The record gives the reactivity of an RNA of 207 nucleotides to 2A3 and DMS. The RNA was probed in 150 mM KOAc, 10 mM MgCl2 and 150 mM bicine (pH 8.5) at 24 C. For 2A3, 2,475 sequencing reads were counted. DMS adducts were read by reverse transcription with MarathonRT.
RNA sequence: GGGAACGACUCGAGUAGAGUCGAAAAAAGUGCUGGAAUUACGUGCAUGAGCCACUAUGCCCGACCAAAAAUGUCAUUUUAAAUACAAAAAUGUAUUUUCAUCUUCAGGUUUGUCACUUGAUUCAGAAUGGCCAUAUUUCAAAUCUCCACCACCCAGCAUUACCCUGUUCUUCGGAACAGGGUAAUGAAAAGAAACAACAACAACAAC
Reactivity to 2A3 in 0.01 (KOAc 150mM, MgCl2 10mM, bicine 150mM(pH8.5), 24C), signal-to-noise 4, nucleotides 027 to 156: a000a000g100u080g010c070u070g020g070a170a130u110u080a110c070g040u060g020c020a020u060g020a000g030c000c010a030c030u030a040u070g040c020c020c030g020a050c030c050a070a080a060a040a030u100g040u080c010a040u020u030u110u190a050a090a040u100a040c030a020a180a110a090a120u090g010u010a040u010u040u030u080c040a080u030c060u110u030c020a010g080g000u050u110u100g060u040c020a010c030u010u060g020a040u130u060c040a050g030a140a080u040g020g000c000c030a040u050a100u090u110u030c070a080a100a090u040c030u010c020c020a010c010c010a030c010c000c010a010g020
Reactivity to DMS in 0.01 (KOAc 150mM, MgCl2 10mM, bicine 150mM(pH8.5), 24C), signal-to-noise 2, nucleotides 027 to 156: a060a070g020u000g040c020u010g040g020a120a080u000u010a040c100g020u010g010c060a080u010g000a120g020c020c020a050c070u000a150u000g020c040c010c050g050a050c000c050a050a040a010a060a090u000g020u030c030a080u000u000u000u000a020a060a140u000a090c050a030a080a050a080a150u000g010u000a050u010u000u010u010c020a060u010c040u000u000c010a050g000g000u010u000u000g020u020c090a070c040u000u000g000a110u000u000c090a110g010a100a050u000g020g020c020c040a110u000a090u010u000u000c040a030a080a150u000c030u000c010c010a020c040c020a120c000c010c010a120g000